Chemical mapping of a 177-nucleotide RNA with 2A3 and DMS. 2A3 adducts were read by reverse transcription with SuperScript II with manganese. The data come from the RNA Mapping Database (RMDB), library OK1LIB. Conditions: 150 mM KOAc, 10 mM MgCl2 and 150 mM bicine (pH 8.5), 24 C. Reactivities are given for positions 27 through 126. As a SHAPE reagent, 2A3 marks flexible, mostly unpaired nucleotides at the ribose 2'-OH.
[RMDB]
RNA sequence: GGGAACGACUCGAGUAGAGUCGAAAAGGCACUGCUGGGCACCGGUGCGAUUGUGCUGUGGGGAGCCUUGGCCACUGCCGUGUCACCGAUGCUGCAAUCGGCGGCGAUGCGUAGCGGCGGCGACGACUCCAUAGACGGCCUUCGGGCCGUCUAUGGAAAAAGAAACAACAACAACAAC
Reactivity to 2A3 in 0.01 (KOAc 150mM, MgCl2 10mM, bicine 150mM(pH8.5), 24C), signal-to-noise 2, nucleotides 027 to 126: g070g000c060a000c020u090g000c020u040g050g010g000c010a010c040c000g010g060u080g000c080g070a060u120u280g050u070g030c030u010g010u100g070g040g000g050a210g070c030c000u030u040g040g000c000c030a080c060u030g030c040c070g000u050g010u020c000a000c070c010g000a020u050g010c110u090g020c040a000a130u070c080g060g000c140g010g080c050g140a070u010g000c040g030u020a000g000c010g020g020c000g000g010c000g000a050c070g060a040c030
Reactivity to DMS in 0.01 (KOAc 150mM, MgCl2 10mM, bicine 150mM(pH8.5), 24C), signal-to-noise 1, nucleotides 027 to 126: g000g080c010a030c030u010g000c020u010g000g020g010c040a050c050c020g020g080u040g030c060g070a130u000u000g040u010g050c070u020g000u000g040g010g010g030a100g030c000c000u000u050g010g000c000c040a040c070u000g040c060c000g050u010g000u000c000a120c020c030g000a040u010g000c070u030g000c120a140a140u010c000g000g000c160g000g000c030g000a050u010g020c060g010u000a080g020c050g000g000c000g000g040c020g000a090c000g000a140c130